[RMDB]
Structure probing data (2A3) for a 207-nucleotide construct. Source: RMDB library RSTRND, as collected in RNAgym.
RNA sequence: GGGAACGACUCGAGUAGAGUCGAAAACGCUUUAGCAGCUUAAUGCUAACCGAUGCAAGAAUUGACUGUGGUUUGAAGCAUCGGCUAAACACACAGUCUAGCCAAGCUAUAUUGCUUGGAUAUAGUUUGGUAAAAACUUAAUCAAGCUAGCUUUUAUUCUUACUCAAACGUUCGCGUUUGAGUAAGAAAAAGAAACAACAACAACAAC
Reactivity to 2A3 in 0.01 (KOAc 150mM, MgCl2 10mM, bicine 150mM(pH8.5), 24C), signal-to-noise 2, nucleotides 027 to 156: c060g010c010u060u020u010a000g000c020a010g010c030u170u300a160a060u090g010c000u000a000a010c000c000g010a010u000g010c000a050a010g000a000a020u020u010g000a010c000u000g000u000g000g000u010u010u040g050a050a010g000c000a000u010c000g000g000c010u130a190a180a000c040a000c000a000c000a030g000u010c000u010a010g010c000c000a000a000g010c000u000a010u010a010u000u180g000c000u000u010g000g000a000u000a000u000a000g000u010u000u000g010g010u020a000a010a010a010a010c070u110u200a040a050u190c000a010a000g000c010u070a030g050c010u050u060u050u120a160u160

The RNA was probed in 150 mM KOAc, 10 mM MgCl2 and 150 mM bicine (pH 8.5) at 24 C. 2A3 adducts were read by reverse transcription with SuperScript II with manganese.